About this RNA:
This 207-nucleotide RNA was probed chemically with 2A3 and DMS. The reactions ran in a buffer of 150 mM KOAc, 10 mM MgCl2 and 150 mM bicine (pH 8.5), at 24 C. Reactivities are given for positions 27 through 156. The 2A3 profile rests on 4,517 reads.

RNA sequence: GGGAACGACUCGAGUAGAGUCGAAAAAUCAUACUGUAGUAACCUGCAAUGAGUCAAUAUCGUUAGGCUCAACAGACACCUGACGCACUCGUUCAGAUCUCUACAGUAUAUGAACGAUCCUUCAAACAGGUGUCAGAUGGGCCUGAUGGAAGGACAACACUAGGUACAUCUUCGGAUGUACCUAGUGAAAAGAAACAACAACAACAAC
Reactivity to 2A3 in 0.01 (KOAc 150mM, MgCl2 10mM, bicine 150mM(pH8.5), 24C), signal-to-noise 5, nucleotides 027 to 156: a000u110c040a030u030a070c000u030g010u020a000g020u030a080a160c020c020u030g070c110a090a130u110g030a030g040u050c030a080a110u080a100u240c010g000u010u020a000g000g000c010u010c040a050a040c050a050g020a000c000a000c010c010u020g010a040c050g010c110a010c030u010c010g010u000u000c000a010g010a080u050c060u010c000u100a010c010a000g010u000a010u000a010u030g010a000a010c020g000a040u050c020c040u160u130c060a050a050a030c000a010g010g000u000g010u000c000a020g030a220u110g010g030g000c020c000u010g000a010u020g030g000a020a020g040g000a000c010a060a000
Reactivity to DMS in 0.01 (KOAc 150mM, MgCl2 10mM, bicine 150mM(pH8.5), 24C), signal-to-noise 2, nucleotides 027 to 156: a100u000c060a100u010a050c010u000g040u000a020g000u000a080a090c050c020u020g040c090a050a090u000g030a090g040u010c040a080a100u000a100u010c020g040u010u000a020g020g000c030u000c030a060a140c130a300g000a050c110a000c000c000u000g010a190c100g020c140a060c070u000c000g000u000u000c010a020g000a000u000c050u000c080u010a050c040a070g020u000a050u000a110u000g020a040a080c030g000a040u000c030c020u010u020c100a110a110a130c000a010g010g030u000g000u020c030a040g000a180u000g020g020g010c000c020u010g090a000u010g020g000a100a050g010g000a050c000a060a230